[RMDB]
RNA sequence: GGGAACGACUCGAGUAGAGUCGAAAAAAUCAGGGAAACACGUUUACCAGUUUAUUAUGAAGGACUUUAAAAUGAUACAGAUGAAGAGAUGGACAGGGCAAAGUAUAGGGGCACAGAGUUUCCAAGCCCUCUCUGGGCAAGCCACCCUCCUAGCACCGUAGUGCUAGGUAUUCGUACCUAGCACUACAAAAGAAACAACAACAACAAC
Reactivity to 2A3 in 0.01 (KOAc 150mM, MgCl2 10mM, bicine 150mM(pH8.5), 24C), signal-to-noise 4, nucleotides 027 to 156: a010a000u150c080a040g010g010g040a040a030a010c040a000c040g020u030u060u050a090c020c010a050g010u030u120u080a110u080u040a090u240g070a070a030g030g000a010c000u110u130u140a070a070a050a040u120g020a010u040a140c030a060g060a040u060g070a080a030g010a010g010a060u060g020g010a020c040a030g030g010g020c050a060a050a000g010u020a040u070a120g020g000g000g020c030a010c010a040g060a020g030u010u030u040c040c020a030a020g010c010c010c000u020c010u000c030u030g000g000g030c020a020a000g040c010c000a030c000c010c000u010c010c010u050a020g040c020a030c080c090
Reactivity to DMS in 0.01 (KOAc 150mM, MgCl2 10mM, bicine 150mM(pH8.5), 24C), signal-to-noise 4, nucleotides 027 to 156: a080a060u010c090a100g030g000g010a090a060a050c060a060c100g000u000u010u000a090c020c020a300g000u000u000u000a060u030u000a090u010g010a080a060g000g020a060c040u010u000u000a040a050a060a090u010g000a140u010a100c050a110g010a060u010g010a080a070g010a090g020a100u000g020g010a020c060a060g020g010g030c040a050a050a090g020u010a090u000a080g020g030g010g010c030a070c050a080g000a100g010u000u000u000c010c020a060a200g000c030c000c010u000c130u010c100u000g040g020g020c030a050a030g000c040c030a040c010c000c010u000c020c020u000a090g020c020a060c110c100